[RMDB]
Overview:
An RNA of 177 nucleotides, treated with DMS and 2A3 and read out base by base. For DMS, 3,434 sequencing reads were counted. Conditions: 150 mM KOAc, 10 mM MgCl2 and 150 mM bicine (pH 8.5), 24 C.
RNA sequence: GGGAACGACUCGAGUAGAGUCGAAAAUCCAGAGAAGCUGGUGAGCUCUUGGAAAGGGCCACCGUCUGGGUCAACGACCACGACGCUAAUGGAGAACGUCCGUUACAGUGCGCACGUACAUACGCACUCCAUGCAAUCUGUUCGCAGAUUGCAUGGAAAAAGAAACAACAACAACAAC
Reactivity to DMS in 0.01 (KOAc 150mM, MgCl2 10mM, bicine 150mM(pH8.5), 24C), signal-to-noise 4, nucleotides 027 to 126: u000c000c010a050g000a120g020a140a110g010c160u020g010g020u000g000a190g020c000u010c000u000u000g020g010a110a190a090g000g000g010c000c020a020c020c000g000u000c010u000g000g000g030u000c090a060a290c120g010a140c040c060a120c070g000a020c060g010c040u010a060a070u010g010g000a050g000a070a050c060g010u000c010c020g010u020u000a080c170a070g010u000g010c000g020c150a040c120g010u000a060c160a120u000a120c030g000c020a010c030
Reactivity to 2A3 in 0.01 (KOAc 150mM, MgCl2 10mM, bicine 150mM(pH8.5), 24C), signal-to-noise 4, nucleotides 027 to 126: u000c000c000a000g010a010g000a140a100g070c280u250g010g010u020g030a080g010c010u040c040u060u080g210g150a290a090a030g030g000g000c000c000a000c000c000g000u000c000u000g030g000g020u020c060a110a050c040g040a030c000c020a080c090g060a010c040g010c080u080a130a040u160g110g010a040g020a130a050c020g050u000c020c020g050u050u100a090c050a080g020u010g020c030g060c040a040c070g140u250a030c030a080u140a020c020g000c010a000c010